Background
An RNA of 177 nucleotides, treated with 2A3 and DMS and read out base by base. Values cover nucleotides 27 to 126. It was measured as part of the RMDB library OK2TRN. The DMS profile rests on 16,030 reads. 2A3 adducts were read by reverse transcription with SuperScript II with manganese.

RNA sequence: GGGAACGACUCGAGUAGAGUCGAAAAUAACUUUGUGCAGGGGUAUGUCGAAGGGAUCUGGCAGAUCUGGCAAAUGCAGCGAGCGGAGGACAACGGGCAGACUUUUGAACCGCUUAUUGAUGUACAACGUACAUCACCAAUUCGUUGGUGAUGUACGAAAAGAAACAACAACAACAAC
Reactivity to 2A3 in 0.01 (KOAc 150mM, MgCl2 10mM, bicine 150mM(pH8.5), 24C), signal-to-noise 6, nucleotides 027 to 126: u050a020a040c040u050u070u160g050u100g020c040a040g000g100g000g000u070a050u100g060u050c040g050a060a030g070g000g010a050u030c020u050g060g000c050a020g020a110u010c030u030g030g010c030a050a060a060u130g010c020a010g030c030g040a010g010c020g000g030a040g050g010a020c020a070a010c060g010g020g000c020a020g040a090c000u110u070u020u050g030a050a050c000c000g000c100u040u080a110u090u130g090a090u080g030u070a040c040a080a010
Reactivity to DMS in 0.01 (KOAc 150mM, MgCl2 10mM, bicine 150mM(pH8.5), 24C), signal-to-noise 9, nucleotides 027 to 126: u010a080a120c080u000u000u010g020u010g020c040a050g000g010g010g010u000a040u000g010u000c060g010a110a100g000g000g000a040u000c040u000g010g010c080a090g000a050u010c050u000g010g020c050a050a080a080u000g000c050a070g020c070g010a080g020c070g010g000a100g010g010a080c080a040a070c110g010g000g010c050a050g010a080c080u000u000u010u000g010a090a120c040c030g000c080u000u010a070u000u010g010a080u010g010u000a070c170a080a180